[RMDB]
RNA sequence: GGGAACGACUCGAGUAGAGUCGAAAAAAAAGAUUUCUGAGACAAACACGCUUCACAAUGUGCGGCAAGGAAACAUUGUUUAUGCAAAGGCACUUCGCAAUGUGUGCUCAAACAUUGCUUAUUCAAAAAAAGAUUUUAGACUUCGGUCUAAAAUCAAUCGAUAAAUCUCGUUCGCGAGAUUUAUCGAAAAAGAAACAACAACAACAAC
Reactivity to 2A3 in 0.01 (KOAc 150mM, MgCl2 10mM, bicine 150mM(pH8.5), 24C), signal-to-noise 1, nucleotides 027 to 156: a000a000a000a030g130a010u200u300u080c040u120g120a120g070a060c090a000a170a000c110a010c030g000c000u000u000c010a010c000a000a020u030g000u000g010c000g030g030c060a080a190g120g000a050a020a010c000a010u000u000g050u080u090u070a080u100g060c040a100a040a040g090g000c030a000c000u050u140c010g010c000a000a000u000g000u000g000u010g000c160u120c200a040a040a000c000a000u050u050g000c000u000u100a200u220u120c110a110a110a020a000a000a000a000g000a010u000u000u030u030a000g030a010c000u010u010c300g040g000u000c000u010a030a000a000a000u000c000a000a040
An RNA of 207 nucleotides, treated with 2A3 and read out base by base. The data come from the RNA Mapping Database (RMDB), library M2RFPK. For 2A3 the reverse transcriptase was SuperScript II with manganese. Values cover nucleotides 27 to 156.